[RMDB]
RNA sequence: GGGAACGACUCGAGUAGAGUCGAAAAAGUCGAACUCGUUGUAGAAAAUAGUGCACCGGAACGCCCGAAGCCGUAUCUUCCUUUACGGCAAUUAGGAAGAAAUGGACGGAAUCACCCUCUCUCCAUACGGUACGGAUAGUUUCGACUAUCCGUACCGAAAAGAAACAACAACAACAAC
Reactivity to 2A3 in 0.01 (KOAc 150mM, MgCl2 10mM, bicine 150mM(pH8.5), 24C), signal-to-noise 2, nucleotides 027 to 126: a000g060u020c020g000a020a030c000u020c060g060u000u030g020u040a020g220a050a170a020a010u090a010g050u090g000c010a070c000c000g000g060a180a020c050g040c000c000c000g110a040a020g050c000c000g000u060a050u000c060u050u060c050c000u070u130u030a090c040g130g020c030a070a060u080u020a090g000g010a000a000g020a010a060a000u090g000g000a000c000g020g000a050a000u080c020a090c000c010c000u000c000u010c000u000c000c010a060u090a150
Reactivity to DMS in 0.01 (KOAc 150mM, MgCl2 10mM, bicine 150mM(pH8.5), 24C), signal-to-noise 1, nucleotides 027 to 126: a010g000u030c050g000a030a180c050u000c050g000u030u010g020u050a200g000a020a040a050a070u040a090g000u030g010c030a030c010c060g000g080a130a060c130g030c000c030c000g000a050a080g000c010c020g020u030a080u020c010u000u010c000c030u000u010u000a080c100g000g000c040a030a100u000u000a000g010g000a050a000g000a000a040a060u050g000g000a030c090g000g000a040a070u000c090a080c000c000c030u000c050u000c050u030c030c090a100u000a140

Chemical mapping of a 177-nucleotide RNA with 2A3 and DMS. The RNA was probed in 150 mM KOAc, 10 mM MgCl2 and 150 mM bicine (pH 8.5) at 24 C. 2A3 adducts were read by reverse transcription with SuperScript II with manganese. In probing experiments dimethyl sulfate is read out at A N1 and C N3, which are open when not base-paired.